[RMDB]
RNA sequence: GGGAACGACUCGAGUAGAGUCGAAAAGGGCAGGUCCGAGUAGGCCCACCAAGCGCGUAUAGCUCAACUGGAUAGAGCUACCGAUUUCUACUCGGUAGGUUGAGGGUUCAAAUCCUUCUACGCGCACCACCUAUUGACGGAUGGAUUUAGGACGAUACGUAUCGAAUUGAUUCGUCAAUUCGAUACGAAAAGAAACAACAACAACAAC
Reactivity to DMS in 0.01 (KOAc 150mM, MgCl2 10mM, bicine 150mM(pH8.5), 24C), signal-to-noise 2, nucleotides 027 to 156: g000g030g000c000a100g000g000u000c000c100g020a090g020u010a080g010g030c080c010c090a170c140c040a080a130g000c020g110c000g000u000a000u000a030g010c030u000c010a090a180c150u000g030g030a300u010a040g000a020g030c000u000a070c080c040g040a080u000u000u010c140u000a110c120u000c000g010g030u020a010g000g000u000u000g020a020g020g030g020u000u000c140a000a300a050u000c000c050u000u000c020u000a000c020g020c000g040c020a170c060c020a020c060c010u000a190u020u010g010a150c070g000g000a020u010g000g010a190u000u010u020a070g000g030a160c030g030a240u000a160
Reactivity to 2A3 in 0.01 (KOAc 150mM, MgCl2 10mM, bicine 150mM(pH8.5), 24C), signal-to-noise 3, nucleotides 027 to 156: g010g010g020c040a050g000g030u040c010c010g030a050g030u150a050g070g010c020c000c000a010c030c010a110a020g000c030g000c000g000u000a000u010a020g050c000u000c010a000a020c090u100g050g060a220u080a070g000a010g000c000u000a000c000c000g030a020u070u270u060c060u190a090c040u000c000g000g000u000a010g000g010u030u010g000a000g020g020g000u000u000c000a000a000a000u000c000c000u000u010c010u010a010c000g020c000g000c000a020c000c020a010c000c000u090a150u170u190g070a020c080g040g000a060u030g020g010a020u060u090u200a100g010g010a010c020g030a120u080a130
Annotation:
An RNA of 207 nucleotides, treated with DMS and 2A3 and read out base by base. It was measured as part of the RMDB library OK3TST. DMS adducts were read by reverse transcription with MarathonRT. 2A3 adducts were read by reverse transcription with SuperScript II with manganese. The RNA was probed in 150 mM KOAc, 10 mM MgCl2 and 150 mM bicine (pH 8.5) at 24 C.